[RMDB]
RNA sequence: GGGAACGACUCGAGUAGAGUCGAAAAAAAGAUAUGGAAUCUCGUACCGCUGAUGACCGUAUGCUAAGCUACGUCGGAAACGACGUAGUAUGCAUACGCAAGGCGAAGAAGAGAUUCCUAAGUCAAACAAAUGUAUGAAGUUCGCUUCAUACAUUUGAAAAGAAACAACAACAACAAC
Reactivity to 2A3 in 0.01 (KOAc 150mM, MgCl2 10mM, bicine 150mM(pH8.5), 24C), signal-to-noise 5, nucleotides 027 to 126: a000a000a000g090a040u080a060u120g000g010a010a010u020c000u000c030g050u130a070c030c030g020c020u070g070a300u140g030a070c050c010g000u000a000u010g010c020u060a140a160g040c010u010a000c000g000u010c010g020g050a080a050a060c010g010a000c000g000u000a000g000u000a000u010g010c000a000u000a000c000g000c000a010a120g000g000c030g040a040a020g050a090a060g000a010g000a000u000u000c000c000u000a020a010g020u000c020a050a060a060
Reactivity to DMS in 0.01 (KOAc 150mM, MgCl2 10mM, bicine 150mM(pH8.5), 24C), signal-to-noise 6, nucleotides 027 to 126: a080a070a120g010a030u000a300u010g000g010a020a010u000c000u010c010g020u010a180c250c000g040c000u020g010a130u010g010a140c300c010g000u000a000u000g010c010u020a250a210g010c000u000a010c000g030u000c000g010g000a070a070a140c000g020a010c000g000u000a010g010u000a110u010g000c000a000u000a000c010g020c020a050a080g000g030c000g010a070a060g010a140a280g000a020g000a010u000u000c000c000u000a010a090g000u000c010a120a120a210